RNA sequence: GGGAACGACUCGAGUAGAGUCGAAAAGCCGUCGAUGCCCUGAACAUGAGCAAGAAGGCAGGCCGUGGGGUGCGGGGUCGCAGUUAGGCUGGGAAGGCAGCACUUGAACUUGUCAAUACCAGCCGCCCAUCUAUCUUGCGUUCGCGCAAGAUAGAUGAAAAGAAACAACAACAACAAC
Reactivity to DMS in 0.01 (KOAc 150mM, MgCl2 10mM, bicine 150mM(pH8.5), 24C), signal-to-noise 4, nucleotides 027 to 126: g000c000c010g010u010c070g010a160u000g010c020c030c010u020g020a100a100c130a100u000g000a050g020c070a070a110g000a150a090g010g000c050a090g010g020c070c050g010u000g010g050g000g020u020g020c090g030g010g010g020u000c040g020c040a070g020u010u000a050g020g010c020u000g000g000g020a090a120g010g000c000a000g000c050a080c170u010u020g010a100a070c060u000u000g020u000c010a010a090u000a210c010c000a010g010c010c000g000c080c050
Reactivity to 2A3 in 0.01 (KOAc 150mM, MgCl2 10mM, bicine 150mM(pH8.5), 24C), signal-to-noise 2, nucleotides 027 to 126: g000c020c000g000u040c030g030a070u140g030c010c000c000u010g060a060a050c040a160u120g010a020g030c040a050a060g060a090a030g100g010c060a030g060g020c100c030g070u060g040g000g000g000u100g070c040g010g020g030g010u040c020g000c030a010g030u070u140a050g010g010c020u000g040g000g000a050a030g040g000c020a010g010c020a050c050u070u150g040a090a000c020u100u080g030u030c010a000a160u030a090c000c000a000g000c010c020g020c010c000
Chemical mapping of a 177-nucleotide RNA with DMS and 2A3. For 2A3 the reverse transcriptase was SuperScript II with manganese. The DMS profile rests on 3,897 reads.